[RMDB]
RNA sequence: GGGAACGACUCGAGUAGAGUCGAAAAACAGGGCCUAUAAGAGGGACCUGGGGGAUUGCGCUAAUUCUGCGUUUCUCGACGUCAUGAAGUUAGCGACAGUAAUGCGGUCGGGGAGCGGUGACGGUGCCAAGGACAUUCAGUUCGCUGAAUGUCCUUGAAAAGAAACAACAACAACAAC
Reactivity to DMS in 0.01 (KOAc 150mM, MgCl2 10mM, bicine 150mM(pH8.5), 24C), signal-to-noise 3, nucleotides 027 to 126: a100c030a030g000g010g010c020c000u000a130u020a130a150g010a240g000g010g000a020c020c020u000g010g010g000g000g010a120u010u010g010c000g010c010u000a020a080u000u000c020u010g000c010g000u000u010u000c180u010c180g000a020c010g000u010c050a040u010g000a060a080g010u000u000a040g000c070g000a090c090a050g000u000a070a070u010g010c110g000g000u000c060g030g000g000g000a070g000c060g000g020u000g010a080c160g010g010u000g020c090
Reactivity to 2A3 in 0.01 (KOAc 150mM, MgCl2 10mM, bicine 150mM(pH8.5), 24C), signal-to-noise 2, nucleotides 027 to 126: a010c010a000g000g020g000c000c020u150a150u120a300a170g120a200g110g000g030a070c000c030u010g010g000g000g000g000a070u060u140g000c000g000c010u040a090a010u080u030c030u090g130c020g000u010u050u040c100u020c070g020a010c020g050u200c010a100u140g000a060a030g100u080u060a050g070c060g030a020c010a000g050u080a030a030u070g040c050g040g060u080c030g000g010g010g000a020g020c020g010g090u050g020a030c050g040g030u030g020c030